[RMDB]
RNA sequence: GGGAACGACUCGAGUAGAGUCGAAAACUGGAGGAUUACCGAAAGUCCCAGCAGCGUCGUCAUGUCCAAGAGGCUGCCGAGGCUAUUGCCCCGCCCCAAUUCAAGACACCGAUCCAAAACCAGUUGGAACUUGGUUUCAGUUCGCUGAAACCAAGUUAAAAGAAACAACAACAACAAC
Reactivity to 2A3 in 0.01 (KOAc 150mM, MgCl2 10mM, bicine 150mM(pH8.5), 24C), signal-to-noise 1, nucleotides 027 to 126: c000u020g030g000a020g000g050a100u090u190a170c030c030g000a030a030a040g030u000c030c020c000a030g020c040a000g000c010g300u020c000g020u010c030a080u100g060u080c040c060a140a080g030a190g110g020c000u000g000c000c010g000a010g030g000c000u040a040u080u160g040c010c000c010c000g090c010c000c000c000a110a190u160u100c110a080a000g030a020c050a020c030c060g000a030u000c000c050a040a000a020a060c040c000a090g080u060u030g030g000
Reactivity to DMS in 0.01 (KOAc 150mM, MgCl2 10mM, bicine 150mM(pH8.5), 24C), signal-to-noise 1, nucleotides 027 to 126: c050u000g040g030a300g020g010a110u010u010a130c090c030g020a200a070a070g020u000c030c010c010a120g010c100a030g000c070g010u000c010g020u000c060a080u000g000u000c050c090a100a180g010a180g000g040c030u020g020c060c010g010a040g010g010c020u000a110u000u010g000c020c000c020c060g010c010c010c010c040a030a070u000u010c100a030a080g010a050c030a110c060c070g000a070u000c020c020a050a070a070a140c080c060a050g000u000u000g000g010